This 177-nucleotide RNA was probed chemically with DMS and 2A3. 2A3 adducts were read by reverse transcription with SuperScript II with manganese. It was measured as part of the RMDB library OK2TRN. Reactivities are given for positions 27 through 126.

[RMDB]
RNA sequence: GGGAACGACUCGAGUAGAGUCGAAAAUUACAUUCAGGAAAUUGGGAUUUGGACUUAAUGUCCUUUUAUUGCCACCUUGCCCUUGUCUGGCCUAAAGGACAUUUGAGCCUAGAAGGGCCUCCUAUGGACUCAUAAGUCCAUUCGUGGACUUAUGAGUAAAAGAAACAACAACAACAAC
Reactivity to DMS in 0.01 (KOAc 150mM, MgCl2 10mM, bicine 150mM(pH8.5), 24C), signal-to-noise 5, nucleotides 027 to 126: u000u010a120c090a100u010u010c110a040g000g010a060a100a130u000u000g010g000g000a070u000u000u010g010g010a040c020u000u010a080a100u000g010u000c000c000u000u000u000u000a070u000u010g000c030c010a060c110c060u010u000g000c030c010c010u000u010g010u000c080u000g000g020c000c120u010a020a030a030g000g010a080c120a100u000u000u000g010a080g020c010c010u000a050g000a070a040g010g010g010c010c090u000c020c000u000a090u010g010g010
Reactivity to 2A3 in 0.01 (KOAc 150mM, MgCl2 10mM, bicine 150mM(pH8.5), 24C), signal-to-noise 3, nucleotides 027 to 126: u050u020a010c030a030u020u190c050a020g050g030a040a050a120u170u080g080g000g020a020u080u060u110g040g010a020c000u110u150a180a020u240g010u020c000c000u020u050u010u050a070u030u070g080c000c000a010c010c000u010u080g030c010c020c000u000u030g050u010c050u010g010g000c000c000u040a040a050a030g080g030a020c010a070u040u020u080g030a020g000c020c000u020a040g010a080a020g020g010g010c000c010u000c010c000u060a090u120g110g020